The record gives the reactivity of an RNA of 207 nucleotides to 2A3.
For 2A3 the reverse transcriptase was SuperScript II with manganese.
It was measured as part of the RMDB library PDB130.
The RNA was probed in 150 mM KOAc, 10 mM MgCl2 and 150 mM bicine (pH 8.5) at 24 C.
RNA sequence: GGGAACGACUCGAGUAGAGUCGAAAAGACAGUUCGGUCCCUAUCCGUCGCGGGCGUAGGUAAUUUGAGAGGAUCUGUCCUUAGUACGAGAGGACCGGGAUGGACUUACCGCUGGUGUACCAGUUGUUCCGCCAGGAGCACGGCUGGAUAGCUAUGUCUUAUGCGAAGACUUCGGUCUUCGCAUAAGAAAAGAAACAACAACAACAAC
Reactivity to 2A3 in 0.01 (KOAc 150mM, MgCl2 10mM, bicine 150mM(pH8.5), 24C), signal-to-noise 3, nucleotides 027 to 156: g030a000c010a020g020u050u160c010g010g000u020c010c000c000u040a090u080c040c030g040u010c040g000c070g030g020g000c050g070u080a020g030g080u120a110a130u140u170u230g120a170g010a050g030g130a060u050c040u060g020u050c000c010u050u200a040g040u130a050c030g030a070g000a050g160g000a000c010c010g000g020g000a020u040g010g010a030c010u040u080a040c010c040g000c070u040g010g000u060g020u090a060c000c000a040g010u000u000g010u040u010c000c000g000c050c090a080g000g060a010g020c070a010c090g050g000c020u000g010g020a130u100a030g020c010u030a080u210g040u010